An RNA of 177 nucleotides, treated with DMS and 2A3 and read out base by base. The DMS profile rests on 3,437 reads. The RNA was probed in 150 mM KOAc, 10 mM MgCl2 and 150 mM bicine (pH 8.5) at 24 C.
[RMDB]
RNA sequence: GGGAACGACUCGAGUAGAGUCGAAAAACAAUUUCGAAAUAUGAAUUUAUGAAAUGUGCCUCAUUAAAUAAUUCCAGGACCUUAAAACACAGUCUAUGGUCCGAUUCCAUAGCGUUAAAAACCUAAAAUAAUCCUGAUACUUCGGUAUCAGGAUUAUAAAAGAAACAACAACAACAAC
Reactivity to DMS in 0.01 (KOAc 150mM, MgCl2 10mM, bicine 150mM(pH8.5), 24C), signal-to-noise 2, nucleotides 027 to 126: a050c070a070a000u000u020u030c020g040a040a080a080u000a160u060g000a150a030u000u000u000a090u040g010a020a010a010u000g000u000g000c080c010u020c070a090u020u010a040a070a070u000a080a060u030u040c010c100a070g000g010a030c050c000u000u010a040a070a050a150c120a050c120a120g000u010c050u050a030u020g000g010u000c110c070g000a110u020u010c020c040a040u010a040g010c070g010u010u030a030a050a040a070a030c050c120u010a030a070a060
Reactivity to 2A3 in 0.01 (KOAc 150mM, MgCl2 10mM, bicine 150mM(pH8.5), 24C), signal-to-noise 3, nucleotides 027 to 126: a000c040a060a030u070u070u080c050g090a030a080a050u270a100u130g080a130a140u090u110u110a150u120g050a020a000a020u050g010u020g060c000c010u060c010a010u100u230a060a050a040u080a040a060u170u050c040c020a020g040g060a100c020c060u150u200a040a080a040a030c170a000c050a050g080u070c020u020a020u040g030g000u020c030c050g050a050u080u000c000c000a020u020a010g030c030g020u020u020a030a000a060a100a110c020c030u050a050a110a000